[RMDB]
RNA sequence: GGGAACGACUCGAGUAGAGUCGAAAAGGUGAGUCGAUCCUAAGAGAUAGGAUAAUUCCGUUUGAAAGCUGGGCUGUUUGAGGCGUGGGGUUCGUCCUUGCGUUUUGUAUGCAGCCUCGUGUAUCGACUGACCCAUCUUAUUCGUAAGAUGGGUCAGAAAAGAAACAACAACAACAAC
Reactivity to 2A3 in 0.01 (KOAc 150mM, MgCl2 10mM, bicine 150mM(pH8.5), 24C), signal-to-noise 6, nucleotides 027 to 126: g070g030u130g030a020g030u030c010g030a040u010c000c000u010a070a020g100a000g020a120u120a100g020g010a020u050a090a110u280u040c020c030g030u040u110u200g090a090a040a020g000c020u020g000g000g000c010u010g060u040u050u250g030a020g000g010c000g010u010g000g000g010g020u040u140c200g060u210c020c000u000u000g000c000g000u000u020u040u020g070u030a270u180g020c000a000g000c000c000u000c000g000u040g010u020a080u060c020g030a020
Reactivity to DMS in 0.01 (KOAc 150mM, MgCl2 10mM, bicine 150mM(pH8.5), 24C), signal-to-noise 3, nucleotides 027 to 126: g010g000u040g010a030g030u010c030g010a140u010c010c010u010a100a080g010a110g000a140u020a070g000g010a090u020a070a170u000u010c020c030g030u000u010u020g020a090a070a210g010c000u000g000g000g010c000u000g000u000u000u000g000a010g000g010c000g010u010g010g010g000g000u010u030c230g010u020c000c000u010u000g010c000g000u010u010u000u000g020u010a020u010g000c010a020g020c030c010u000c300g000u000g000u000a130u020c030g000a210

Annotation: This 177-nucleotide RNA was probed chemically with 2A3 and DMS. Values cover nucleotides 27 to 126. The data come from the RNA Mapping Database (RMDB), libraries RFM100 and RFMREP. For 2A3 the reverse transcriptase was SuperScript II with manganese.